[RMDB]
RNA sequence: GGGAACGACUCGAGUAGAGUCGAAAAGUUAGGAUGAUAUGUGAUUGUUUGGCACCUCCAGUGAAGGUAAUUCAAGACAAGAGAUUGUCUCAGCCAUUGAGCCUUUGCGGAUCUACGUUGAGAUCUCCGGGUACUGGAUAUUCGUAUCCAGUACCCGAAAAGAAACAACAACAACAAC
Reactivity to 2A3 in 0.01 (KOAc 150mM, MgCl2 10mM, bicine 150mM(pH8.5), 24C), signal-to-noise 3, nucleotides 027 to 126: g180u170u170a060g040g050a120u080g010a020u060a120u300g150u010g040a180u070u060g080u150u010u070g090g000c050a060c000c030u000c010c060a040g000u000g070a080a040g040g000u070a050a080u150u120c080a050a000g000a020c010a050a050g000a000g070a130u030u030g080u000c010u030c080a020g030c070c000a040u070u100g030a010g000c000c010u030u020u040g070c070g010g020a060u010c010u040a090c070g020u010u140g050a040g010a080u020c000u020c010
Reactivity to DMS in 0.01 (KOAc 150mM, MgCl2 10mM, bicine 150mM(pH8.5), 24C), signal-to-noise 2, nucleotides 027 to 126: g020u000u000a000g020g010a050u000g010a080u000a130u050g000u010g000a040u000u000g010u000u060u010g000g000c200a110c070c000u000c080c050a090g010u010g000a130a040g020g000u040a000a060u000u030c140a120a010g000a030c080a080a080g000a090g040a140u000u040g000u000c040u030c110a000g000c080c090a030u000u030g000a080g000c000c000u030u020u010g000c080g000g020a060u000c020u000a000c150g000u030u010g010a120g020a020u000c030u000c150